[RMDB]
RNA sequence: GGGAACGACUCGAGUAGAGUCGAAAAAUGCUUUGUGUGAAAAAGCUUUUAAAUAUUUGAACAUUGCUAAAUGUUCCCGUAUCAUUCCUGCAAAGGCACGUGUUGAGUGCUAUGACAGGUUUAAAGUCAGCAUGAGCCUUCGGGCUCAUGAAAAGAAACAACAACAACAAC
Reactivity to 2A3 in 0.01 (KOAc 150mM, MgCl2 10mM, bicine 150mM(pH8.5), 24C), signal-to-noise 2, nucleotides 027 to 129: a010u010g000c000u000u070u110g020u010g020u110g230a030a040a000a000a020g000c000u000u020u000u060a190a300a020u150a000u000u050u120g040a060a050c020a000u000u060g070c040u060a000a000a090u140g030u050u020c000c000c000g020u030a140u050c020a000u080u020c000c000u020g000c000a000a000a210g090g000c020a060c020g050u150g080u040u050g040a180g070u000g000c000u000a020u000g020a030c000a000g030g000u000u070u000a020a000a000g060u000c010a070g000
Reactivity to DMS in 0.01 (KOAc 150mM, MgCl2 10mM, bicine 150mM(pH8.5), 24C), signal-to-noise 3, nucleotides 027 to 129: a050u020g020c020u010u000u010g000u000g000u070g050a080a110a010a030a060g010c070u010u020u020u010a070a080a030u050a060u000u000u050g020a060a040c050a000u030u040g000c210u000a000a000a000u070g010u000u000c000c070c100g010u000a040u000c050a100u050u010c010c010u000g000c100a090a100a230g000g000c000a060c050g050u020g070u010u030g030a150g050u000g000c020u000a090u000g000a080c010a010g000g000u000u010u010a070a110a150g010u030c070a040g040

Description:
The data come from the RNA Mapping Database (RMDB), library 15KLIB. The record gives the reactivity of an RNA of 170 nucleotides to 2A3 and DMS. 2A3 adducts were read by reverse transcription with SuperScript II with manganese. Values cover nucleotides 27 to 129. Conditions: 150 mM KOAc, 10 mM MgCl2 and 150 mM bicine (pH 8.5), 24 C. The DMS profile rests on 13,019 reads.